[RMDB]
RNA sequence: GGGAACGACUCGAGUAGAGUCGAAAAGUGGCAUUGGUUACUGCGAAUCAAACGCCCGACCUGCUGAAUCAAGUUGAACGACGCACUUGGCAAACUUUGCACUUCAAACGGAUAGCGAUUCAACGACCCUUUAGUCUCAGUUCGCUGAGACUAAAGGAAAAGAAACAACAACAACAAC
Reactivity to DMS in 0.01 (KOAc 150mM, MgCl2 10mM, bicine 150mM(pH8.5), 24C), signal-to-noise 3, nucleotides 027 to 126: g020u000g020g050c020a220u000u010g010g010u000u010a090c140u000g010c130g010a050a020u010c060a010a090a170c200g010c010c050c040g010a160c040c010u010g010c080u000g010a110a050u020c040a130a120g010u000u000g040a030a040c160g000a170c130g010c040a030c150u010u000g000g020c080a040a140a120c090u010u010u000g000c040a090c130u000u000c110a020a060a120c120g000g010a040u010a070g000c070g010a090u000u000c050a050a050c090g000a080c150
Reactivity to 2A3 in 0.01 (KOAc 150mM, MgCl2 10mM, bicine 150mM(pH8.5), 24C), signal-to-noise 3, nucleotides 027 to 126: g110u140g020g000c030a050u050u060g000g000u070u050a140c070u190g090c040g080a030a030u050c030a100a040a060c110g050c000c000c020g050a070c000c000u060g030c050u070g070a080a100u110c070a110a060g010u040u030g040a030a020c030g150a030c030g020c040a020c040u040u050g060g000c020a030a060a200c090u190u130u070g010c040a080c040u100u100c080a100a100a080c040g040g040a060u080a060g030c010g040a050u020u050c010a020a000c040g070a050c000